[RMDB]
RNA sequence: GGGAACGACUCGAGUAGAGUCGAAAACUCAACUCCACUUUUUGGGGUUGUAAUGGUUUCGACGGGGCAUAAGGAAGGUGACUGAAGCCGGCUCGGUUAGAGCAAAAACACAAACGCUAACAAAAUCCGUUGAAACUGAAUUCGUUCAGUUUCAACGAAAAGAAACAACAACAACAAC
Reactivity to 2A3 in 0.01 (KOAc 150mM, MgCl2 10mM, bicine 150mM(pH8.5), 24C), signal-to-noise 3, nucleotides 027 to 126: c010u000c000a000a000c000u000c000c010a030c130u170u230u060u200u210g020g000g010g000u000u000g000u010a030a060u110g040g020u050u030u070c020g010a030c020g030g020g030g000c050a080u050a100a040g060g020a030a050g040g010u080g010a030c020u050g020a050a000g020c000c000g040g000c020u010c000g040g060u080u130a050g000a010g000c000a030a030a080a070a010c120a030c050a070a090a040c080g010c050u140a050a030c010a040a100a000a040u010c040
Reactivity to DMS in 0.01 (KOAc 150mM, MgCl2 10mM, bicine 150mM(pH8.5), 24C), signal-to-noise 2, nucleotides 027 to 126: c020u010c000a000a010c010u010c000c000a090c300u010u020u000u020u020g020g000g000g010u020u000g000u020a070a070u000g040g020u000u000u000c030g010a080c070g020g030g010g000c100a030u030a030a140g000g000a060a050g030g020u020g000a080c060u010g030a070a120g010c080c050g010g000c020u010c050g000g000u020u010a140g000a040g010c010a010a060a040a110a040c110a050c220a090a060a110c130g000c060u020a070a060c100a050a030a130a090u000c040

About this RNA: This 177-nucleotide RNA was probed chemically with 2A3 and DMS. Source: RMDB libraries RFM100 and RFMREP, as collected in RNAgym. DMS (dimethyl sulfate) methylates the pairing face of unpaired adenines and cytosines. 2A3 adducts were read by reverse transcription with SuperScript II with manganese.